[RMDB]
RNA sequence: GGGAACGACUCGAGUAGAGUCGAAAACGGUCUUUCACUGCAUUCAGUUGAUUUGGACGACAUUCCAGACGCAAUGAGCCCAAUGAUGGGUCGAUCUGAUAGCAAUGCAGUACUUUCAGGUGGACAACUCCCCUAUCCAUUUCGAUGGAUAGGGGAGAAAAGAAACAACAACAACAAC
Reactivity to DMS in 0.01 (KOAc 150mM, MgCl2 10mM, bicine 150mM(pH8.5), 24C), signal-to-noise 4, nucleotides 027 to 126: c100g010g030u000c020u020u000u000c110a100c010u010g000c060a050u000u000c060a150g010u010u000g000a180u000u000u000g000g000a030c120g000a120c300a080u010u010c020c030a040g000a080c080g000c110a100a070u000g010a110g010c000c020c000a070a140u020g010a120u000g000g010g000u000c040g000a060u000c020u000g000a040u000a060g010c100a060a040u000g030c080a020g020u000a080c100u000u000u000c100a070g010g000u000g000g000a040c080a090a180
Reactivity to 2A3 in 0.01 (KOAc 150mM, MgCl2 10mM, bicine 150mM(pH8.5), 24C), signal-to-noise 3, nucleotides 027 to 126: c010g050g000u010c040u030u200u120c050a000c020u020g000c010a020u000u050c020a050g040u080u070g130a260u030u040u070g010g010a010c060g040a030c090a020u150u000c030c010a000g010a050c040g000c060a030a140u130g000a050g060c000c000c000a070a090u300g140a140u100g040g060g010u030c040g040a130u000c010u030g000a060u070a040g030c030a020a000u020g000c000a000g010u040a050c000u070u170u180c060a020g010g110u050g060g010a010c000a060a040
Source: RMDB library OK2TRN, as collected in RNAgym. Chemical mapping of a 177-nucleotide RNA with DMS and 2A3. For 2A3 the reverse transcriptase was SuperScript II with manganese. The reactions ran in a buffer of 150 mM KOAc, 10 mM MgCl2 and 150 mM bicine (pH 8.5), at 24 C. DMS adducts were read by reverse transcription with MarathonRT. High 2A3 reactivity points to a flexible backbone, as in loops and unpaired stretches.